[RMDB]
RNA sequence: GGGAACGACUCGAGUAGAGUCGAAAAAGCCGAGGACUACGGUCCUCGGCAACAACCGUCACAACGGCUUCCUGGCGUGACGGGGUUAACCCCAACGGAGCAAGUCCGAGCUUACGAGCUCGCACAAUUUAGGAGAAUUCCUUCGGGAAUUCUCCAACCUUAUUAGCGAGUUCGCUCGCUAAUAAGGAAAAGAAACAACAACAACAAC
Reactivity to 2A3 in 0.01 (KOAc 150mM, MgCl2 10mM, bicine 150mM(pH8.5), 24C), signal-to-noise 2, nucleotides 027 to 156: a010g000c000c000g000a010g010g000a000c040u060a010c300g080g000u040c010c000u010c000g020g120c000a010a010c000a000a000c000c000g010u010c000a010c020a040a060c050g050g000c030u270u170c060c010u070g060g000c010g000u020g000a010c000g000g010g000g000u140u210a060a060c030c000c000c000a040a080c090g000g040a020g030c020a110a040g010u030c080c000g000a000g000c000u070u050a050c160g080a010g000c010u040c000g050c020a000c020a090a160u210u290u300a090g000g000a000g010a000a000u000u010c000c030u040u100c270g120g000g010a000a010u000u000c000u020c000c000a000a000
Conditions: 150 mM KOAc, 10 mM MgCl2 and 150 mM bicine (pH 8.5), 24 C. The record gives the reactivity of an RNA of 207 nucleotides to 2A3. High 2A3 reactivity points to a flexible backbone, as in loops and unpaired stretches. Source: RMDB library M2RFPK, as collected in RNAgym.